[RMDB]
RNA sequence: GGGAACGACUCGAGUAGAGUCGAAAACGUACGAUAUGCUAUAAUCGAUGCUAGCCGAUUAUAAUGCGCUAUAGCUAAUCGUACGCGUAGCUAAUUAGCGCCGUAGCCGGCUAAUCGUAUACGCGCGGAUCUUGGGCAUUUUCGAAUGCCCAAGAUCAAAAGAAACAACAACAACAAC
Reactivity to 2A3 in 0.01 (KOAc 150mM, MgCl2 10mM, bicine 150mM(pH8.5), 24C), signal-to-noise 1, nucleotides 027 to 126: c040g070u030a020c090g020a090u020a060u300g060c030u020a020u050a160a170u090c030g040a000u110g090c080u030a010g000c000c000g000a000u040u030a010u020a070a070u180g000c010g000c010u010a020u000a040g000c000u010a090a030u140c020g050u030a040c020g000c030g010u020a030g000c000u000a010a120u140u040a050g010c000g030c040c040g060u060a020g050c000c040g080g040c000u020a010a020u020c000g060u020a020u000a060c060g000c020g000c070g060
Reactivity to DMS in 0.01 (KOAc 150mM, MgCl2 10mM, bicine 150mM(pH8.5), 24C), signal-to-noise 1, nucleotides 027 to 126: c050g020u010a040c000g000a060u010a090u000g030c000u000a080u000a080a040u020c080g010a050u000g000c180u010a080g000c030c020g010a030u000u010a050u020a040a110u010g030c040g040c070u000a010u000a010g000c000u000a160a060u020c030g030u000a020c120g030c080g040u010a020g000c040u010a050a200u010u000a000g020c010g030c010c160g020u000a050g000c110c040g000g010c010u020a060a040u010c020g010u000a050u000a050c090g010c060g000c180g000

This 177-nucleotide RNA was probed chemically with 2A3 and DMS.
The RNA was probed in 150 mM KOAc, 10 mM MgCl2 and 150 mM bicine (pH 8.5) at 24 C.
For 2A3 the reverse transcriptase was SuperScript II with manganese.
The data come from the RNA Mapping Database (RMDB), library OK2TRN.